Structure probing data (2A3) for a 207-nucleotide construct. Conditions: 150 mM KOAc, 10 mM MgCl2 and 150 mM bicine (pH 8.5), 24 C.

[RMDB]
RNA sequence: GGGAACGACUCGAGUAGAGUCGAAAAUCCUAAGUCAAAGGACGUCUCCUUGGAUUUAAGCUUUGAGUCCAUCGGAAACGAUGGACAAUGAUGAGCUUUGUCAGGAGACGGCUUUGAUAUGGAAAAACAUCUUCCUUCUUUCGAGAAGGAAGAUGAACCGCGUAAAUUAGUUCGCUAAUUUACGCGGAAAAGAAACAACAACAACAAC
Reactivity to 2A3 in 0.01 (KOAc 150mM, MgCl2 10mM, bicine 150mM(pH8.5), 24C), signal-to-noise 2, nucleotides 027 to 156: u020c010c010u040a140a020g010u000c010a000a000a020g050g100a250c000g000u010c000u000c010c020u120u220g080g020a070u170u300u300a000a000g000c010u000u030u030g040a020g020u000c000c000a010u000c000g000g070a100a090a130c030g000a000u000g000g000a000c010a010a000u100g000a010u050g010a000g000c000u040u000u020g020u030c010a010g000g000a000g000a000c000g000g010c000u000u000u000g000a000u000a130u120g050g020a100a120a020a000a040c000a000u000c000u000u000c000c000u000u010c000u020u090u140c280g020a010g000a010a000g000g030a000a000g000a000u000g000a020a000
As a SHAPE reagent, 2A3 marks flexible, mostly unpaired nucleotides at the ribose 2'-OH.